[RMDB]
RNA sequence: GGGAACGACUCGAGUAGAGUCGAAAAGGGGUCUCCUUGGAUUUAGGCUUGUCGCUAAGAACGAAGAACGACACUGAAGCCUCCACGGUGUCGGGAGUUCUUAAAAGUCAAGCCUUGUCAGGAGACGGAGGCACCCAAAGGGGAGUUCGCUCCCCAACAGAACUUAUUGAUUCGUCAAUAAGUUCUGAAAAGAAACAACAACAACAAC
Reactivity to 2A3 in 0.01 (KOAc 150mM, MgCl2 10mM, bicine 150mM(pH8.5), 24C), signal-to-noise 5, nucleotides 027 to 156: g040g010g040g020u010c020u030c040c030u120u220g190g010a120u250u220u270a080g000g000c000u010u010g020u020c030g050c140u070a050a030g010a020a000c040g050a100a050g010a050a000c000g000a010c000a000c010u040g050a140a030g040c010c000u000c000c010a020c010g000g000u000g000u000c000g000g010g000a030g000u000u000c000u000u040a100a130a060a030g010u010c000a000a000g010c000c000u000u050g000u000c010a000g000g020a020g010a010c000g000g000a000g010g000c010a060c000c000c000a070a060a010g010g010g000g010a010g010u070u070c150g110c060u010c010c000c000c000a000a000
Reactivity to DMS in 0.01 (KOAc 150mM, MgCl2 10mM, bicine 150mM(pH8.5), 24C), signal-to-noise 2, nucleotides 027 to 156: g000g030g040g000u000c010u000c010c000u000u000g000g020a070u000u010u000a060g030g010c000u000u010g020u010c070g040c280u010a060a020g000a050a070c000g000a090a190g030a150a290c020g000a040c010a020c020u000g010a040a100g010c040c000u000c000c030a300c060g000g000u000g000u000c000g010g000g000a110g030u010u010c000u000u010a010a030a100a120g000u000c000a040a010g000c000c010u010u000g010u010c040a080g020g000a090g000a010c000g020g030a040g060g100c040a200c000c000c030a040a130a120g010g010g000g000a080g010u000u010c020g030c000u000c000c000c010c000a010a090